[RMDB]
RNA sequence: GGGAACGACUCGAGUAGAGUCGAAAAAGAGUUAAAGAGUACCUGAAACUGCUGAAAGGGAACCGAAUCGUUUCCAGUGUCUAUAAUCCGUGGUAUAUUUCAUUGGCGAGUGUGUGCGUGCGUGUGCCUAACGAGUAUACUUCGGUAUACUCGUUAGAAAAGAAACAACAACAACAAC
Reactivity to 2A3 in 0.01 (KOAc 150mM, MgCl2 10mM, bicine 150mM(pH8.5), 24C), signal-to-noise 3, nucleotides 027 to 126: a000g050a040g010u080u060a120a020a030g060a010g050u050a030c010c010u010g060a090a050a040c040u140g040c010u050g070a100a060a060g030g000g000a020a010c020c030g040a050a070u070c020g000u010u050u000c000c000a050g040u030g010u060c030u050a060u080a150a060u050c020c050g010u020g020g050u050a110u010a030u110u160u090c100a090u050u080g030g000c040g000a070g040u040g000u020g000u030g060c030g030u020g000c000g030u070g010u040g040c000
Reactivity to DMS in 0.01 (KOAc 150mM, MgCl2 10mM, bicine 150mM(pH8.5), 24C), signal-to-noise 6, nucleotides 027 to 126: a080g000a080g010u010u000a050a100a080g000a110g020u000a080c060c020u000g000a100a080a080c050u000g010c030u000g010a060a100a130g000g010g000a060a070c060c040g000a040a070u000c050g010u000u000u000c000c000a120g010u010g010u000c060u000a070u010a070a090u000c060c040g020u010g010g010u000a080u000a070u010u010u000c060a080u000u010g010g000c050g000a060g020u000g010u000g010u000g000c040g020u000g000c070g010u000g010u000g010c100
This 177-nucleotide RNA was probed chemically with 2A3 and DMS.
For 2A3, 2,780 sequencing reads were counted.
The data come from the RNA Mapping Database (RMDB), library RFMREP.
For DMS, 9,486 sequencing reads were counted.